[RMDB]
RNA sequence: GGGAACGACUCGAGUAGAGUCGAAAAGAAUGGAAAGGGAUUGUAGAGAUCAGUGUCGCAGCAUUCUCAAUUAGAUUGUAUAUGGUUAGGCCGGGCUUCUACGUGCGACAGAUACUGGUGCGAAGAAGGGUUAUAAAUACUUCGGUAUUUAUAACCCAAAAGAAACAACAACAACAAC
Reactivity to 2A3 in 0.01 (KOAc 150mM, MgCl2 10mM, bicine 150mM(pH8.5), 24C), signal-to-noise 4, nucleotides 027 to 126: g020a030a040u060g020g050a040a020a030g080g010g010a040u050u070g050u110a060g020a020g010a110u040c020a030g030u000g030u090c030g000c030a040g030c010a070u140u010c050u010c080a050a220u150u110a030g080a090u040u110g060u040a100u040a050u180g060g030u060u020a040g000g020c000c030g010g000g010c000u030u010c010u040a000c000g020u030g030c010g020a030c020a010g030a010u080a060c030u040g000g030u060g090c020g020a020a020g040a130a110
Reactivity to DMS in 0.01 (KOAc 150mM, MgCl2 10mM, bicine 150mM(pH8.5), 24C), signal-to-noise 8, nucleotides 027 to 126: g010a090a060u010g010g000a040a060a060g010g000g000a080u020u000g020u000a070g010a120g000a030u000c040a040g020u000g000u000c010g010c050a080g000c050a070u020u000c020u000c090a090a110u040u030a050g000a110u010u000g010u010a080u030a100u010g000g010u010u000a070g010g000c020c030g010g000g020c070u000u010c030u000a050c090g010u010g010c030g000a030c040a060g000a090u010a060c030u000g000g020u010g010c060g000a060a070g010a090a120